[RMDB]
RNA sequence: GGGAACGACUCGAGUAGAGUCGAAAACGCUGGGUAGCGCAUUAAAGCAAAAAGCGUAUCUGUUGCAAGGGCUCCUGAAGCGCGCACGGGAGCCUGAUGACCAACUACGCUAACAAAUCUACCUGUGCUGAAGCGCGCACGGCAACCGAAAGGUGCGGACAUCUGAUUUCUUCGGAAAUCAGAUGUCAAAAGAAACAACAACAACAAC
Reactivity to 2A3 in 0.01 (KOAc 150mM, MgCl2 10mM, bicine 150mM(pH8.5), 24C), signal-to-noise 2, nucleotides 027 to 156: c030g000c010u010g020g000g000u030a010g000c010g020c100a040u200u280a270a160a080g080c100a100a080a070a030a010g010c020g020u020a070u100c220u130g000u020u000g040c060a210a300g020g010g010c000u010c000c000u020g020a140a040g000c000g000c010g000c020a000c080g010g000g000a000g000c010c010u000g000a000u010g000a000c000c000a010a000c010u010a000c010g000c010u050a070a020c070a100a080a080u050c000u010a010c010c000u020g050u050g020c010u030g030a070a010g000c000g000c000g000c000a000c000g000g000c020a060a020c000c010g040a050a040a030g000g000u050g030c020g010